[RMDB]
RNA sequence: GGGAACGACUCGAGUAGAGUCGAAAAAAAAAAGAUAUGGAAUGUGGUGGUGAGGGAGAUGACGGUGUCGGAAACGACACGGUCAUCGAAGAACUCACGUAACAUCCACAUUCCUAAGUCAAAAAAAGAAUGUAAUGAUGUUCGCAUCAUUACAUUCAAAAGAAACAACAACAACAAC
Reactivity to DMS in 0.01 (KOAc 150mM, MgCl2 10mM, bicine 150mM(pH8.5), 24C), signal-to-noise 3, nucleotides 027 to 126: a010a020a060a060a080a120g000a010u000a020u000g000g010a020a000u000g010u000g000g020u000g020g000u000g000a010g000g020g000a020g010a010u000g000a010c000g000g030u000g010u000c000g030g000a010a000a020c000g010a010c000a000c010g000g010u000c000a000u010c000g010a080a110g010a160a150c010u000c000a000c000g010u000a000a000c210a020u000c000c000a010c000a000u000u000c000c000u000a000a040g000u020c000a000a000a050a110a070a100a110
Reactivity to 2A3 in 0.01 (KOAc 150mM, MgCl2 10mM, bicine 150mM(pH8.5), 24C), signal-to-noise 1, nucleotides 027 to 126: a000a000a000a000a010a040g030a010u030a000u030g010g000a010a000u000g000u000g000g020u010g010g000u010g000a010g000g000g010a040g010a000u010g000a010c150g230g000u000g000u010c000g010g000a010a010a000c010g000a000c010a010c040g050g000u000c000a010u010c000g010a090a000g000a010a010c010u000c010a000c000g000u010a000a000c000a180u040c000c000a000c000a000u000u000c000c000u000a000a000g000u000c000a060a030a030a000a000a030a180
An RNA of 177 nucleotides, treated with DMS and 2A3 and read out base by base.
The reactions ran in a buffer of 150 mM KOAc, 10 mM MgCl2 and 150 mM bicine (pH 8.5), at 24 C.
For 2A3 the reverse transcriptase was SuperScript II with manganese.